Source: RMDB library OK2TST, as collected in RNAgym. Chemical mapping of a 177-nucleotide RNA with 2A3 and DMS. The 2A3 profile rests on 886 reads. For 2A3 the reverse transcriptase was SuperScript II with manganese. For DMS the reverse transcriptase was MarathonRT.

[RMDB]
RNA sequence: GGGAACGACUCGAGUAGAGUCGAAAAAACAAAAAAGAAGAUGGAACCAAGAAGUUUGUUGAGGAGUUUGUCGAAGAGUUAUACAGCGAUAGCCCUAAGAAGCAAAUUAAGACGGGUUACAAGCUAACAGACGAAUACAAUUCGUUGUAUUCGUCUGAAAAGAAACAACAACAACAAC
Reactivity to 2A3 in 0.01 (KOAc 150mM, MgCl2 10mM, bicine 150mM(pH8.5), 24C), signal-to-noise 1, nucleotides 027 to 126: a000a000c020a000a040a000a050a000a090g110a040a000g020a030u060g000g000a020a000c040c030a020a030g050a000a030g040u000u040u080g020u100u060g000a020g020g060a110g050u030u140u120g010u030c000g050a050a000g060a060g050u010u110a100u020a160c080a010g050c020g000a000u040a040g020c060c000c000u070a130a070g020a010a000g020c050a090a030a030u070u020a060a050g020a040c050g030g000g010u000u000a020c020a040a020g020c030u070a040a030
Reactivity to DMS in 0.01 (KOAc 150mM, MgCl2 10mM, bicine 150mM(pH8.5), 24C), signal-to-noise 3, nucleotides 027 to 126: a090a030c080a010a080a050a100a030a090g010a080a050g000a100u000g000g000a080a060c040c020a070a120g010a140a060g000u000u000u010g010u000u010g010a090g000g000a060g000u000u000u010g010u000c050g010a060a050g010a090g030u020u000a080u020a080c170a070g000c030g000a070u000a050g010c030c030c030u000a050a100g010a110a120g020c080a030a020a070u000u010a050a070g030a100c180g000g000g000u000u010a060c060a050a150g010c050u020a070a160